Source: RMDB library OK2TRN, as collected in RNAgym. The record gives the reactivity of an RNA of 177 nucleotides to DMS and 2A3. For DMS, 1,863 sequencing reads were counted.
RNA sequence: GGGAACGACUCGAGUAGAGUCGAAAAAUUCACGGGCAUUUGUUUCAAAAGGUUUGCCAAUUGAACCCCACUUAAAGACAAACACUGACUCCCCAGAGGACUCUACCUUCUCAAGGGUCUCAUUAUCCACCUAACGUAAGUUCGCUUACGUUAGGUGAAAAGAAACAACAACAACAAC
Reactivity to DMS in 0.01 (KOAc 150mM, MgCl2 10mM, bicine 150mM(pH8.5), 24C), signal-to-noise 3, nucleotides 027 to 126: a090u030u000c040a070c240g010g000g000c160a060u010u000u010g000u000u000u010c030a060a090a100a090g000g000u000u010u000g010c060c020a100a170u000u000g000a060a140c080c000c010c030a060c120u010u000a050a100a090g010a060c040a030a020a040c050a080c130u000g000a050c090u000c020c010c000c070a130g000a120g000g000a030c040u000c040u010a050c090c090u000u000c040u000c100a080a090g000g000g000u000c020u000c050a070u000u020a100u000c060
Reactivity to 2A3 in 0.01 (KOAc 150mM, MgCl2 10mM, bicine 150mM(pH8.5), 24C), signal-to-noise 2, nucleotides 027 to 126: a000u100u080c040a020c080g030g040g030c070a090u020u150u290g110u010u240u180c060a080a050a090a090g070g000u060u090u070g050c000c030a020a050u040u080g060a060a070c000c010c030c010a010c070u080u190a120a070a000g040a040c030a000a130a010c040a010c070u040g050a030c010u010c010c010c000c000a000g050a030g060g040a010c010u040c000u050a040c000c060u110u100c020u010c040a020a010g010g000g000u000c000u010c010a080u060u120a010u030c040

The RNA was probed in 150 mM KOAc, 10 mM MgCl2 and 150 mM bicine (pH 8.5) at 24 C. 2A3 adducts were read by reverse transcription with SuperScript II with manganese.